An RNA of 177 nucleotides, treated with DMS and 2A3 and read out base by base. The 2A3 profile rests on 105,737 reads. For DMS the reverse transcriptase was MarathonRT. It was measured as part of the RMDB library OK2TRN. The DMS profile rests on 75,689 reads. As a SHAPE reagent, 2A3 marks flexible, mostly unpaired nucleotides at the ribose 2'-OH. For 2A3 the reverse transcriptase was SuperScript II with manganese.
[RMDB]
RNA sequence: GGGAACGACUCGAGUAGAGUCGAAAAGGAUGCAACGUAGUAAUAUGUGUGACAGCUACCUCUUGAGUUACACAUUACUAGUCGUAAUGCGAUUCAAGAGGUAUAUCGCGUUACGACAUCUGUAUCGCUACAACUGUCUAUUCGUAGAUAGUUGUAGAAAAGAAACAACAACAACAAC
Reactivity to DMS in 0.01 (KOAc 150mM, MgCl2 10mM, bicine 150mM(pH8.5), 24C), signal-to-noise 9, nucleotides 027 to 126: g000g000a010u000g010c010a040a130c300g010u000a010g010u000a020a030u010a060u010g020u000g020u000g020a110c230a060g000c050u000a130c010c010u000c000u000u000g000a040g010u000u000a040c020a020c010a020u000u000a000c000u000a090g010u000c040g000u000a000a000u000g000c010g010a020u000u010c010a010a010g000a010g010g010u000a020u000a010u000c010g010c000g010u000u000a010c000g000a030c010a040u000c110u000g010u000a020u000c020g010
Reactivity to 2A3 in 0.01 (KOAc 150mM, MgCl2 10mM, bicine 150mM(pH8.5), 24C), signal-to-noise 9, nucleotides 027 to 126: g040g000a000u010g000c010a030a040c070g070u060a070g010u010a020a060u070a130u230g030u000g020u030g110a230c070a050g020c020u040a060c000c000u020c000u010u030g040a020g020u030u060a010c010a000c000a010u000u010a000c010u020a020g020u010c010g000u000a000a000u010g000c000g000a000u050u050c010a010a000g010a000g030g020u020a020u000a000u000c000g000c000g000u000u000a000c000g000a000c000a010u020c030u020g010u010a010u020c010g000